[RMDB]
RNA sequence: GGGAACGACUCGAGUAGAGUCGAAAAAUGAAUUGAUUCGUCAAUUCAUGACCGCAAGCGAGCCGAAACGCAUUUUAUGCGUACGCUGGCGAAAGCCUAAAAAUCAUCGUGUCUUCGGACACGAUAAGACAUAUUGGAUAUUCGUAUCCAAUAUGUCAAAAGAAACAACAACAACAAC
Reactivity to DMS in 0.01 (KOAc 150mM, MgCl2 10mM, bicine 150mM(pH8.5), 24C), signal-to-noise 9, nucleotides 027 to 126: a010u000g000a010a000u000u000g010a020u000u010c200g020u000c000a000a000u000u000c000a000u000g010a180c110c020g010c100a080a060g010c020g010a110g010c100c120g010a070a110a030c010g010c000a020u000u010u010u010a030u010g010c000g010u000a060c090g010c030u000g010g010c010g000a070a080a110g010c020c020u010a010a060a060a080a090u010c120a040u000c000g020u000g000u000c000u000u010c210g020g010a010c000a000c000g000a010u000a030a070
Reactivity to 2A3 in 0.01 (KOAc 150mM, MgCl2 10mM, bicine 150mM(pH8.5), 24C), signal-to-noise 9, nucleotides 027 to 126: a000u010g000a000a000u010u010g010a010u030u070c180g060u010c080a000a000u000u000c000a000u010g050a040c000c030g000c060a040a020g010c010g060a020g080c110c070g200a190a150a020c010g020c010a020u090u120u100u300a070u060g000c000g000u010a040c030g010c030u030g020g000c010g030a080a020a000g040c020c030u140a110a100a030a020a030u180c070a010u010c010g000u000g000u000c000u020u040c210g100g000a000c000a000c000g000a000u010a000a020
Structure probing data (DMS and 2A3) for a 177-nucleotide construct. The DMS profile rests on 35,621 reads. For DMS the reverse transcriptase was MarathonRT. The RNA was probed in 150 mM KOAc, 10 mM MgCl2 and 150 mM bicine (pH 8.5) at 24 C.